[RMDB]
RNA sequence: GGGAACGACUCGAGUAGAGUCGAAAACUUCGUUCAGCACAGCGACAAGAUUGAUCGAGGAAAACGGCGUCAGGUUCGAUGGCUUCAGCAGCACUGCGUUGCCGCCGGCGAUCGCAGGGCCAAGCUUGUGCGCGACCAGGUUCAGUGGAUCAUUGUAGACCCUAAAGAAAUUCGUUUCUUUAGGGUCAAAAGAAACAACAACAACAAC
Reactivity to DMS in 0.01 (KOAc 150mM, MgCl2 10mM, bicine 150mM(pH8.5), 24C), signal-to-noise 3, nucleotides 027 to 156: c030u000u010c040g010u000u000c030a120g000c050a120c030a130g000c030g010a100c020a070a110g010a120u000u010g000a100u000c030g010a240g010g000a080a060a090a100c060g020g000c030g030u010c040a060g040g000u010u000c020g010a100u000g010g010c030u000u000c060a090g020c050a120g020c030a110c020u010g050c060g010u000u000g040c020c020g030c090c100g030g040c000g010a040u000c040g050c030a060g020g020g020c030c040a080a110g020c020u000u010g040u000g020c010g020c060g020a050c030c010a120g010g020u000u000c040a080g010u010g010g030a080u000c030a100u010u000g020u000a250
Reactivity to 2A3 in 0.01 (KOAc 150mM, MgCl2 10mM, bicine 150mM(pH8.5), 24C), signal-to-noise 3, nucleotides 027 to 156: c050u090u050c040g050u060u070c050a020g030c020a050c010a040g000c010g030a050c080a130a050g010a120u040u120g000a010u080c050g020a020g010g090a040a040a020a000c010g020g010c000g020u010c040a000g000g050u090u100c050g050a100u080g050g020c030u080u040c050a050g010c020a020g020c010a010c060u040g000c000g020u010u040g000c010c030g180c090c140g000g010c000g020a030u090c060g000c000a010g000g000g000c010c020a020a020g020c000u060u070g020u060g050c040g000c010g040a020c020c010a030g000g070u060u050c000a000g010u090g040g000a050u050c010a050u300u290g020u260a050